[RMDB]
RNA sequence: GGGAACGACUCGAGUAGAGUCGAAAAGCCUAACAGUUCGCUGUUAGGCAAAUGCACAGACUUCGCAACUGUGAAAAACACAUCAGAAGUGUCUAUGCGAGGAUCGUUGCGUCUUCGGACGCAACAACACAGUCAAUAUCUUCGGAUAUUGACUGUGAAAAGAAACAACAACAACAAC
Reactivity to 2A3 in 0.01 (KOAc 150mM, MgCl2 10mM, bicine 150mM(pH8.5), 24C), signal-to-noise 9, nucleotides 027 to 126: g000c000c000u000a000a000c000a010g050u090u110c160g040c100u000g000u000u010a000g000g000c000a000a030a010u110g000c000a010c010a020g030a020c010u020u000c020g000c040a050a060c040u030g010u030g140a160a000a010a020a000c030a000c000a020u110c050a030g060a220a020g060u040g060u110c020u050a040u040g010c020g030a060g080g050a110u160c120g000u000u000g000c000g000u000c000u010u020c140g080g000a000c000g000c000a000a000c000a010a000
Reactivity to DMS in 0.01 (KOAc 150mM, MgCl2 10mM, bicine 150mM(pH8.5), 24C), signal-to-noise 7, nucleotides 027 to 126: g010c010c000u000a000a010c000a010g020u000u010c220g040c000u000g010u000u000a000g010g020c000a000a010a030u000g020c020a020c030a020g000a060c020u000u000c020g010c150a110a100c100u000g010u000g000a050a090a060a120a120c030a030c020a020u010c180a120g000a070a060g010u000g010u000c040u000a080u000g000c010g010a080g000g000a100u000c130g000u000u000g010c000g010u000c000u000u000c170g010g010a010c000g030c000a000a000c000a100a170

The record gives the reactivity of an RNA of 177 nucleotides to 2A3 and DMS. For 2A3 the reverse transcriptase was SuperScript II with manganese. It was measured as part of the RMDB library M2PK50. The reactions ran in a buffer of 150 mM KOAc, 10 mM MgCl2 and 150 mM bicine (pH 8.5), at 24 C. For DMS, 13,164 sequencing reads were counted. The 2A3 profile rests on 28,004 reads.